[RMDB]
RNA sequence: GGGAACGACUCGAGUAGAGUCGAAAAGAUAUGGAGGCAACUUUUGACGCGAGAUAAUCGGAAACGAUUAUACUCGCGAUAAGUUGCUCCUAAGUCAAACCCGACAUAACUUCGGUUAUGUCGGGAACUUUUCCACAAGGUUCGCCUUGUGGAAAAGAAAAGAAACAACAACAACAAC
Reactivity to DMS in 0.01 (KOAc 150mM, MgCl2 10mM, bicine 150mM(pH8.5), 24C), signal-to-noise 2, nucleotides 027 to 126: g000a050u000a300u010g030g000a050g010g010c000a010a000c000u000u000u000u010g020a150c090g020c000g010a020g000a030u000a010a000u000c000g010g000a100a080a140c020g000a030u000u000a010u000a070c000u000c000g010c000g000a030u000a000a010g000u010u000g020c010u000c000c000u000a020a210g000u000c010a120a160a220c000c020c000g000a000c000a000u000a000a000c000u010u010c240g000g000u000u000a000u000g000u000c020g020g000g000a000a000
Reactivity to 2A3 in 0.01 (KOAc 150mM, MgCl2 10mM, bicine 150mM(pH8.5), 24C), signal-to-noise 2, nucleotides 027 to 126: g030a020u050a060u190g020g000a060g080g300c010a010a000c010u000u000u190u300g240a130c120g000c010g000a000g000a000u000a000a000u000c010g010g030a090a020a020c010g010a000u050u000a000u070a090c000u000c000g020c000g000a000u000a010a000g000u000u000g020c000u010c000c000u020a080a020g030u020c040a140a020a160c040c020c010g000a000c000a000u000a000a010c010u080u070c300g120g010u000u000a010u020g000u010c000g010g000g000a000a010